[RMDB]
RNA sequence: GGGAACGACUCGAGUAGAGUCGAAAAUAGUGGUACUAUACCUCAGUUUUAUCAGGUGUUCUUAAAAUCACCUGGAAAUACUGAGGUUGUGUCUCACUGAAAAGAGCGACAUGUUCGCAUGUCGCUCCAUUCAGUUGCGGUUCGCCGCAACUGAAUGAAAAGAAACAACAACAACAAC
Reactivity to 2A3 in 0.01 (KOAc 150mM, MgCl2 10mM, bicine 150mM(pH8.5), 24C), signal-to-noise 2, nucleotides 027 to 126: u180a000g010u010g000g010u020a000c000u040a030u040a030c010c010u000c000a000g000u000u000u000u040a190u130c000a000g000g000u010g020u140u100c060u180u290a080a100a060a100u040c010a000c000c000u030g000g030a000a020a010u120a000c000u010g010a010g000g020u000u000g000u000g000u010c000u000c020a000c000u000g010a070a110a040a020g000a000g000c010g000a000c000a000u010g040u060u090c240g000c110a000u000g000u000c010g000c000u000c010
Reactivity to DMS in 0.01 (KOAc 150mM, MgCl2 10mM, bicine 150mM(pH8.5), 24C), signal-to-noise 2, nucleotides 027 to 126: u010a020g030u010g010g010u000a020c010u010a060u010a000c000c000u000c000a010g000u000u000u000u000a080u000c000a000g010g010u010g000u010u000c140u010u010a080a110a150a080u000c000a000c000c000u000g000g000a020a010a020u000a000c000u000g000a010g000g000u000u000g000u000g000u000c020u000c000a010c000u000g000a070a050a100a080g000a010g020c000g010a000c000a010u000g010u010u010c210g010c000a020u000g010u000c000g000c000u000c010
Source: RMDB library RFMREP, as collected in RNAgym.
An RNA of 177 nucleotides, treated with 2A3 and DMS and read out base by base.
Reactivities are given for positions 27 through 126.
DMS adducts were read by reverse transcription with MarathonRT.